[RMDB]
RNA sequence: GGGAACGACUCGAGUAGAGUCGAAAAGCGGUCGUGGUGCUGAGCCUCGGCCUGAUCCGCGUGCAUCCGCUGUUGGCCGUCGGUCUCAACAUUGUGGCGGUCAGCGGGUUGGCCCCUACGCUGUGGGAUACAGGCGGAAUUUCGAUUCCGCCUGUAUAAAAGAAACAACAACAACAAC
Reactivity to DMS in 0.01 (KOAc 150mM, MgCl2 10mM, bicine 150mM(pH8.5), 24C), signal-to-noise 2, nucleotides 027 to 126: g000c120g010g020u000c020g010u020g000g020u000g000c290u010g000a250g000c000c010u000c010g010g000c000c000u000g010a040u020c030c020g010c050g010u000g010c090a060u010c020c030g010c010u000g020u010u000g010g000c000c000g030u000c030g020g010u010c120u010c200a060a130c110a140u010u000g020u010g020g020c000g010g020u000c010a020g000c020g010g000g000u000u000g020g000c040c000c010c040u000a060c070g000c020u000g030u010g010g000g000
Reactivity to 2A3 in 0.01 (KOAc 150mM, MgCl2 10mM, bicine 150mM(pH8.5), 24C), signal-to-noise 1, nucleotides 027 to 126: g020c020g000g020u030c030g020u020g060g040u090g040c120u130g050a010g000c020c000u010c040g010g010c000c030u000g030a020u040c000c010g030c030g000u070g030c010a000u030c010c030g020c080u090g080u290u100g040g000c020c000g000u060c070g090g100u050c040u020c100a140a180c090a110u060u300g160u180g090g000c000g000g000u000c040a000g000c010g010g000g000u050u130g000g040c050c000c010c010u030a030c080g000c090u080g000u090g050g000g040

Structure probing data (DMS and 2A3) for a 177-nucleotide construct. The 2A3 profile rests on 1,321 reads. For DMS, 3,615 sequencing reads were counted.